[RMDB]
RNA sequence: GGGAACGACUCGAGUAGAGUCGAAAAGUCGGAUGUUGACCCUGCUGAGGAGGCCACCGUGAGCAUUGCCGGGUCGUACAUUGUUACCGGCCGCCAGCUGCAGCCUCUAUACCAAGCGCUUGGCAUACUCGAAUAGAACCUUCGGGUUCUAUUCGAGAAAAGAAACAACAACAACAAC
Reactivity to DMS in 0.01 (KOAc 150mM, MgCl2 10mM, bicine 150mM(pH8.5), 24C), signal-to-noise 1, nucleotides 027 to 126: g000u010c070g060g000a040u040g000u000u000g000a020c090c020c060u010g020c030u010g000a170g010g010a080g010g000c010c040a070c040c100g000u020g010a180g010c060a140u020u000g070c080c030g010g000g010u000c070g020u020a030c150a090u010u020g010u000u010a090c080c030g030g020c030c250g000c090c030a060g000c000u000g050c100a060g000c030c010u020c060u010a050u000a090c080c070a060a080g010c050g000c000u000u010g000g000c070a200u010a090
Overview: An RNA of 177 nucleotides, treated with DMS and read out base by base. The RNA was probed in 150 mM KOAc, 10 mM MgCl2 and 150 mM bicine (pH 8.5) at 24 C. The DMS profile rests on 759 reads.